The data come from the RNA Mapping Database (RMDB), library M2RFPK. This 207-nucleotide RNA was probed chemically with 2A3 and DMS. The DMS profile rests on 7,952 reads. The reactions ran in a buffer of 150 mM KOAc, 10 mM MgCl2 and 150 mM bicine (pH 8.5), at 24 C. The 2A3 profile rests on 6,227 reads.

RNA sequence: GGGAACGACUCGAGUAGAGUCGAAAACAUAGCGUUUCACAAUGUGCGCCAUUAACAUUGUUUAUACAAGCACGUUUCGCAAUGUACGGCGCAGAAACAUUGCCAACACAAAUACGCUUCACGAUGUAAAACAUCGGUGCGUUCGCGCACCGAUGAACAAUGCUCAAAUCUUCGGAUUUGAGCAUUGAAAAGAAACAACAACAACAAC
Reactivity to 2A3 in 0.01 (KOAc 150mM, MgCl2 10mM, bicine 150mM(pH8.5), 24C), signal-to-noise 6, nucleotides 027 to 156: c050a070u130a010g020c000g020u020u120u140c130a050c000a030a010u010g010u020g010c000g010c010c020a100u180u210a080a020c000a010u000u010g060u030u120u100a180u050a040c090a080a100g140c110a060c200g030u030u080u100c040g000c000a010a000u000g000u010a010c050g000g000c010g010c010a000g030a010a070a000c000a010u000u020g070c060c080a140a040c070a060c020a100a130a040u130a020c010g030c010u090u140c120a090c120g070a060u130g060u260a030a050a060a050c000a000u000c000g000g010u000g000c010g020u050u060c180g010c000g000c080a000c000c010g000a000u000g000a000a000
Reactivity to DMS in 0.01 (KOAc 150mM, MgCl2 10mM, bicine 150mM(pH8.5), 24C), signal-to-noise 4, nucleotides 027 to 156: c080a090u000a060g020c040g020u000u000u010c090a070c030a040a070u000g050u000g010c000g050c020c020a150u000u010a160a080c010a040u000u000g010u000u000u000a080u000a160c090a080a140g040c070a110c140g010u000u000u010c120g000c010a040a000u010g050u000a090c080g010g010c010g050c020a060g020a140a130a100c010a030u010u000g010c000c020a060a120c090a150c090a070a050a110u000a070c060g020c010u000u020c060a080c050g050a100u000g000u010a060a060a110a210c010a010u000c000g020g010u010g030c000g040u000u000c240g020c010g020c000a030c010c000g010a000u000g010a040a100